[RMDB]
Chemical mapping of a 177-nucleotide RNA with 2A3. The reactions ran in a buffer of 150 mM KOAc, 10 mM MgCl2 and 150 mM bicine (pH 8.5), at 24 C. For 2A3, 818 sequencing reads were counted. For 2A3 the reverse transcriptase was SuperScript II with manganese. Values cover nucleotides 27 to 126. It was measured as part of the RMDB library OK2TRN.

RNA sequence: GGGAACGACUCGAGUAGAGUCGAAAACCGAGCGCGUGCGGCUCGAGGCGCUCGGCUCGUCGGUGUCGACGAACUUCGCGUCGGGCGUCUGGGUGAAGGACACGCUCACCGCGCGCGACAACGGCGAAGGAGCGAGGUGGUUCGCCACCUCGCUCCUAAAAGAAACAACAACAACAAC
Reactivity to 2A3 in 0.01 (KOAc 150mM, MgCl2 10mM, bicine 150mM(pH8.5), 24C), signal-to-noise 1, nucleotides 027 to 126: c000c000g000a030g030c010g010c010g030u030g000c020g030g000c010u030c200g020a090g010g040c000g000c000u010c020g000g000c030u000c000g020u000c050g070g180u300g270u300c030g030a040c040g030a120a060c050u140u170c030g020c000g040u010c020g000g040g030c030g000u010c040u110g030g000g040u060g040a170a070g140g070a060c090a010c210g050c000u000c000a040c010c000g000c000g000c000g000c010g090a030c020a130a080c010g100g070c010g050a030